[RMDB]
RNA sequence: GGGAACGACUCGAGUAGAGUCGAAAAUGCUAGUGCCGAGCGAGAAAUGCUCGCGACGUUGCCAAAUUGCGGGGAAGACCUCUUUAUUGCGCGGGUUACCAAGCACGGCGGCCGUGCGUCCGUUUUUUAGGAUAAAGCACGCGCCGAGUGUGGCCAGGGAAGCAUUUAGGUUCGCCUAAAUGCUUCCAAAAGAAACAACAACAACAAC
Reactivity to 2A3 in 0.01 (KOAc 150mM, MgCl2 10mM, bicine 150mM(pH8.5), 24C), signal-to-noise 1, nucleotides 027 to 156: u140g000c020u000a010g000u000g110c020c000g110a060g000c000g000a180g110a010a180a000u060g020c000u000c020g000c000g000a010c020g030u080u130g000c000c090a030a170a240u070u220g010c070g000g060g000g110a100a000g020a220c030c060u100c000u170u220u060a160u040u090g040c050g000c000g000g000g050u000u050a060c000c020a080a000g000c000a000c000g200g010c000g000g010c090c080g040u020g000c000g000u030c040c020g110u000u000u000u000u060u300a060g000g000a030u000a050a150a000g000c000a000c030g010c060g010c000c000g000a000g010u070g000u000g000g080c060c040a180g010